[RMDB]
RNA sequence: GGGAACGACUCGAGUAGAGUCGAAAACUAAAGGCUGGUUCAGAUCUAGCGCAAAUUCACCUGGGUCGGACUGUCUCAGGUCGGCAGCCUAUUACCUCACAUAUUGACCCCGUAAUUGCUCUCCUCAAGGAAGAAGAAUUUUCGAAUUCUUCUUCCUAAAAGAAACAACAACAACAAC
Reactivity to 2A3 in 0.01 (KOAc 150mM, MgCl2 10mM, bicine 150mM(pH8.5), 24C), signal-to-noise 8, nucleotides 027 to 126: c020u080a090a080a050g060g000c040u040g060g030u100u110c070a060g020a120u020c030u050a020g040c020g020c120a010a080a130u190u110c030a040c030c010u030g010g020g020u030c030g050g100a100c060u100g030u020c020u010c050a030g020g020u030c020g040g010c020a010g030c010c000u030a080u040u100a060c000c010u070c020a060c020a060u140a060u090u180g050a090c000c000c000c010g040u060a070a080u100u080g020c010u000c010u010c020c000u030c050a060
Reactivity to DMS in 0.01 (KOAc 150mM, MgCl2 10mM, bicine 150mM(pH8.5), 24C), signal-to-noise 5, nucleotides 027 to 126: c040u010a080a070a060g000g000c010u000g010g000u000u010c100a080g010a050u010c020u000a050g010c110g030c130a020a080a080u040u020c120a070c080c030u000g010g000g030u010c050g000g020a060c090u030g000u010c010u000c070a050g000g010u010c040g000g000c020a070g000c030c010u000a090u000u010a100c030c010u010c030a080c080a060u020a040u040u000g000a110c060c000c010c040g000u020a040a090u000u010g010c030u010c040u000c010c020u010c150a130